[RMDB]
This 207-nucleotide RNA was probed chemically with 2A3 and DMS. For DMS the reverse transcriptase was MarathonRT. The data come from the RNA Mapping Database (RMDB), library OK3TST. In probing experiments dimethyl sulfate is read out at A N1 and C N3, which are open when not base-paired. The reactions ran in a buffer of 150 mM KOAc, 10 mM MgCl2 and 150 mM bicine (pH 8.5), at 24 C. 2A3 adducts were read by reverse transcription with SuperScript II with manganese. For DMS, 1,608 sequencing reads were counted.
RNA sequence: GGGAACGACUCGAGUAGAGUCGAAAAUCGCUUACCAAUGGACAACACCAGCUCCGCAUCGAGGCGGUCGACGGCAACUUCGCCACCAGCGUCCGUGUAUUCUCCUUCAGCAAGAAAGAGACAGUCAUUAAGUUCGAGCUGGUCGCGCCGGAGGAGAAGGAAGAUACGGAUUCGUCCGUAUCUUCCUAAAAGAAACAACAACAACAAC
Reactivity to 2A3 in 0.01 (KOAc 150mM, MgCl2 10mM, bicine 150mM(pH8.5), 24C), signal-to-noise 3, nucleotides 027 to 156: u040c010g020c020u060u110a110c020c000a030a020u060g000g010a010c010a080a020c000a060c050c000a000g000c000u060c060c040g010c040a050u070c050g070a060g010g070c000g030g050u090c030g040a080c040g000g040c030a140a150c190u270u210c090g000c010c000a080c000c020a010g040c000g030u030c010c000g020u030g010u040a140u100u010c010u030c010c010u010u050c030a170g060c090a230a110g020a060a030a000g020a020g010a030c030a030g060u100c010a110u090u240a300a010g020u100u070c040g000a000g000c000u000g000g000u020c030g000c090g030c030c020g000g000a010g030g000a030g050a010
Reactivity to DMS in 0.01 (KOAc 150mM, MgCl2 10mM, bicine 150mM(pH8.5), 24C), signal-to-noise 1, nucleotides 027 to 156: u020c050g020c020u000u020a170c060c030a070a300u000g000g000a060c050a160a220c090a070c000c020a000g010c000u010c020c030g030c080a150u000c000g000a150g030g010c000g050g000u000c000g020a020c070g000g050c110a170a080c170u000u020c010g060c000c020a110c000c010a110g000c030g010u010c000c100g030u000g050u000a110u000u000c000u020c000c000u000u000c010a190g080c120a140a170g000a030a010a030g010a120g000a050c110a090g030u010c010a020u000u000a030a170g020u000u010c030g070a110g000c000u010g040g000u000c020g050c100g000c030c000g020g010a300g000g000a050g020a090